[RMDB]
RNA sequence: GGGAACGACUCGAGUAGAGUCGAAAAGGGGUCCUCUUUGAUCGUCCCUAGGCAUCGAUCAUACACUGAAGCCUCCACGGUGUAUGGGAGCCUGCGGACGGGAGAGGACGGAGGCACCCAAAACCGGCAGAAAGAGUUUCGACUCUUUCUGCCGGAAACUUAAGCGGAAGUUCGCUUCCGCUUAAGUAAAAGAAACAACAACAACAAC
Reactivity to 2A3 in 0.01 (KOAc 150mM, MgCl2 10mM, bicine 150mM(pH8.5), 24C), signal-to-noise 1, nucleotides 027 to 156: g160g040g010g030u050c010c040u020c000u300u240u020g000a000u000c000g000u000c010c030c030u090a040g010g000c010a000u300c300g000a000u000c000a000u000a000c000a000c000u050g040a130a020g010c010c010u000c000c000a040c020g010g020u020g000u000a020u000g010g000g010a000g000c000c000u030g020c110g000g000a000c030g000g020g010a020g000a000g000g000a000c000g000g000a000g000g020c000a040c000c020c000a050a070a000a060c000c020g000g020c000a010g020a000a020a000g030a000g010u040u170u300c240g130a090c020u000c020u000u000u000c010u000g020c000c000g010g010a000a000
Structure probing data (2A3) for a 207-nucleotide construct. The data come from the RNA Mapping Database (RMDB), library RNAMAK. The 2A3 profile rests on 1,217 reads. The reactions ran in a buffer of 150 mM KOAc, 10 mM MgCl2 and 150 mM bicine (pH 8.5), at 24 C.